RNA sequence: GGGAACGACUCGAGUAGAGUCGAAAAUGGUGUUAAGUGGAAUAAGUGGAAAAAUAUACAUAUAUGUACAGGGGGCUACAUAUAUGUAUAUGCCCCCUUCGUUCAGUAUAAGUAGGUAUAAGGUGGAAAAUCCUACGAGGUUCGCCUCGUAGGAUUUAAAAGAAACAACAACAACAAC
Reactivity to DMS in 0.01 (KOAc 150mM, MgCl2 10mM, bicine 150mM(pH8.5), 24C), signal-to-noise 1, nucleotides 027 to 126: u030g010g020u000g010u010u010a050a100g000u020g000g010a070a100u020a050a110g020u010g040g000a020a060a060a100a050u000a010u000a020c000a020u000a020u000a000u010g000u000a000c090a100g020g040g010g000g020c140u000a040c030a020u010a030u000a040u040g010u020a020u000a000u050g000c090c020c030c000c030u010u030c030g000u010u000c040a030g030u010a050u050a030a110g000u010a050g010g000u010a070u050a000a110g000g000u000g000g000a020